[RMDB]
RNA sequence: GGGAACGACUCGAGUAGAGUCGAAAAGAUAUGGAGUGUGAGACCACCGCCCUCGGAAACGAGUAACAAGUGGGUCUCCACUCCUAAGUCAAAGAGGACUGUCCAACUUCGGUUGGACAGUCCUCAACGUAAAGAACAAGUUCGCUUGUUCUUUACGAAAAGAAACAACAACAACAAC
Reactivity to 2A3 in 0.01 (KOAc 150mM, MgCl2 10mM, bicine 150mM(pH8.5), 24C), signal-to-noise 2, nucleotides 027 to 126: g030a010u100a050u190g000g000a020g010u040g060u160g020a000g010a000c000c010a040c030c060g000c020c000c020u000c000g040g020a080a090a030c020g000a020g020u220a150a120c120a190a070g050u180g110g170g060u000c000u000c000c000a000c010u000c000c000u000a010a010g020u020c040a080a050a060g000a020g000g000a010c000u010g020u010c020c000a010a010c000u100u160c300g040g000u030u050g000g070a000c000a000g010u000c000c010u000c010a000a000
Reactivity to DMS in 0.01 (KOAc 150mM, MgCl2 10mM, bicine 150mM(pH8.5), 24C), signal-to-noise 6, nucleotides 027 to 126: g000a040u000a300u010g010g000a010g020u000g000u020g020a030g000a100c000c000a030c020c070g000c300c190c000u000c000g000g000a110a090a120c010g010a010g000u010a090a100c210a160a060g010u000g010g020g010u000c000u000c000c000a000c010u000c000c000u000a010a060g010u000c030a060a090a120g000a010g000g000a010c010u000g000u000c000c000a010a010c000u000u020c170g020g010u000u000g000g000a000c000a000g000u000c000c000u000c000a000a030